[RMDB]
RNA sequence: GGGAACGACUCGAGUAGAGUCGAAAAAGGGAUCUGCGUGCUCACUGUUCUCUUGCCAAGACACGGAGUGGACAGUAACUCGCCUUUACACGGGCGUUGGUAUCAGUUCUUGCUUCGAAGCUGCGAAAAACUCUACUUUAUUCGUAAAGUAGAGUUUAAAAGAAACAACAACAACAAC
Reactivity to 2A3 in 0.01 (KOAc 150mM, MgCl2 10mM, bicine 150mM(pH8.5), 24C), signal-to-noise 9, nucleotides 027 to 126: a000g070g000g010a060u030c020u070g030c030g050u050g020c020u020c030a050c020u030g040u080u010c030u000c000u030u070g070c020c020a080a040g110a060c050a020c100g020g000a010g000u040g010g010a010c010a020g020u030a030a030c010u010c030g010c000c000u070u110u130a100c120a040c090g010g000g000c020g050u070u060g040g010u050a050u100c010a020g010u050u010c020u050u130g030c010u010u010c010g040a060a030g010c040u060g010c040g050a160a020
Reactivity to DMS in 0.01 (KOAc 150mM, MgCl2 10mM, bicine 150mM(pH8.5), 24C), signal-to-noise 9, nucleotides 027 to 126: a050g010g000g000a050u010c020u010g010c090g020u000g010c040u010c070a100c080u010g010u010u010c020u000c020u000u010g010c040c050a100a090g010a100c150a130c110g010g000a050g020u000g000g000a030c040a110g010u000a050a090c040u000c010g010c010c010u000u010u030a100c280a100c240g000g000g010c010g000u020u000g000g010u010a060u010c060a080g000u010u000c030u010u010g010c030u000u000c020g000a090a120g010c030u000g000c060g000a060a070
Structure probing data (2A3 and DMS) for a 177-nucleotide construct.
For DMS the reverse transcriptase was MarathonRT.
Reactivities are given for positions 27 through 126.
The RNA was probed in 150 mM KOAc, 10 mM MgCl2 and 150 mM bicine (pH 8.5) at 24 C.
Source: RMDB libraries RFM100 and RFMREP, as collected in RNAgym.
For 2A3 the reverse transcriptase was SuperScript II with manganese.
DMS (dimethyl sulfate) methylates the pairing face of unpaired adenines and cytosines.